About this RNA: Structure probing data (2A3 and DMS) for a 177-nucleotide construct. For 2A3, 3,383 sequencing reads were counted. High 2A3 reactivity points to a flexible backbone, as in loops and unpaired stretches. Values are in units of 0.01, from 0 to 300, in steps of 10.
RNA sequence: GGGAACGACUCGAGUAGAGUCGAAAAAGAUCCGCAAGUACAACGGCGCGCUGAUCUACAUCGGUCACGACGAGAGUUCGAUCCAUCCGCUCCUGUGGCGCGUCGGCACGAUCCUGAAGAAACCAGAAUCCAUACCGGUAUUCGUACCGGUAUGGAUAAAAGAAACAACAACAACAAC
Reactivity to 2A3 in 0.01 (KOAc 150mM, MgCl2 10mM, bicine 150mM(pH8.5), 24C), signal-to-noise 3, nucleotides 027 to 126: a010g030a040u020c020c010g020c060a020a070g100u090a100c040a160a050c110g050g000c010g030c010g000c040u030g070a100u040c020u070a040c010a110u130c020g000g040u080c060a030c110g080a000c000g020a070g000a010g180u160u140c050g030a080u000c040c010a040u040c040c020g020c050u060c000c030u070g030u120g060g000c000g000c000g040u010c000g000g000c030a020c060g010a040u030c000c010u090g060a120a040g050a110a100a020c030c000a030g110a060
Reactivity to DMS in 0.01 (KOAc 150mM, MgCl2 10mM, bicine 150mM(pH8.5), 24C), signal-to-noise 3, nucleotides 027 to 126: a040g000a040u000c010c070g040c070a130a170g010u010a070c130a100a220c060g010g010c070g010c060g000c040u030g020a050u000c030u000a080c160a060u000c080g000g000u000c090a100c110g020a040c030g000a170g000a060g010u000u000c020g000a050u010c050c060a080u010c060c040g020c060u000c000c040u000g020u010g000g030c040g020c030g000u000c010g020g000c100a050c130g000a050u000c030c010u000g010a120a080g000a050a070a130c060c070a090g000a160